[RMDB]
RNA sequence: GGGAACGACUCGAGUAGAGUCGAAAAGUGGAUUGCAAAGCUAUCGAGGGCGUGUCGAGGAUCAGUUACCUCGUAAAUCCAUCUGAAAAACAGUAAACGCAAACGACGAACAGUUUGCUCUAGCAGCUUAAUCGCUCGCUAGAUCUCACACCAGCUUCCUUUAUUAAAACUUCGGUUUUAAUAAAGGAAAAGAAACAACAACAACAAC
Reactivity to 2A3 in 0.01 (KOAc 150mM, MgCl2 10mM, bicine 150mM(pH8.5), 24C), signal-to-noise 3, nucleotides 027 to 156: g030u010g000g040a020u030u060g040c070a060a070a060g020c060u070a050u160c030g020a050g010g030g020c060g010u070g030u060c030g020a020g020g000a050u100c030a020g070u110u130a110c000c010u010c010g010u030a010a020a010u010c010c000a030u070c030u040g040a120a010a010a010a000c030a030g060u160a030a100a060c080g000c000a000a030a000c020g170a020c040g030a130a030c030a030g000u000u000u000g000c010u000c000u000a000g000c000a000g000c000u040u050a070a040u150c050g000c010u020c060g000c000u000a000g000a010u000c000u020c020a080c010a040c020c060a020g080c030u030u000
Chemical mapping of a 207-nucleotide RNA with 2A3. The reactions ran in a buffer of 150 mM KOAc, 10 mM MgCl2 and 150 mM bicine (pH 8.5), at 24 C. The data come from the RNA Mapping Database (RMDB), library RSTRND. Values cover nucleotides 27 to 156.